[RMDB]
RNA sequence: GGGAACGACUCGAGUAGAGUCGAAAACAGAUGGUCUGGGCUGCACGCGCACUACAGUGGUCAUAGAAAUGAAACGAUAGAAUUAAAGAUGAUCGAGAGGGAAUGAGCUUUGUAAGAGGCUCAGGAAGUAGUGCGUAGUUUUCGAACUACGCACUACAAAAGAAACAACAACAACAAC
Reactivity to 2A3 in 0.01 (KOAc 150mM, MgCl2 10mM, bicine 150mM(pH8.5), 24C), signal-to-noise 4, nucleotides 027 to 126: c030a020g080a080u090g040g040u010c010u080g030g020g030c010u030g030c040a020c040g010c020g020c000a010c030u100a030c040a020g060u040g030g010u020c020a050u050a030g150a030a130a070u190g010a090a030a010c040g040a030u040a060g140a080a030u170u090a140a100a030g170a040u100g010a040u050c020g020a040g030a020g100g030g030a020a020u050g000a010g020c020u050u000u010g050u020a100a050g030a000g130g000c000u000c030a000g040g010a130a000
Reactivity to DMS in 0.01 (KOAc 150mM, MgCl2 10mM, bicine 150mM(pH8.5), 24C), signal-to-noise 4, nucleotides 027 to 126: c100a090g030a110u020g000g020u010c010u000g020g010g020c010u010g050c070a040c090g020c080g000c050a090c090u020a040c140a060g020u010g020g000u000c060a020u000a070g010a060a080a080u010g000a060a080a150c150g000a110u010a040g010a120a120u040u010a090a120a060g010a070u020g010a040u030c010g010a170g000a090g010g020g020a130a120u000g000a020g010c010u000u000u010g000u020a080a100g010a050g000g010c000u000c000a020g000g000a060a110
Background
An RNA of 177 nucleotides, treated with 2A3 and DMS and read out base by base. For DMS the reverse transcriptase was MarathonRT. For 2A3 the reverse transcriptase was SuperScript II with manganese.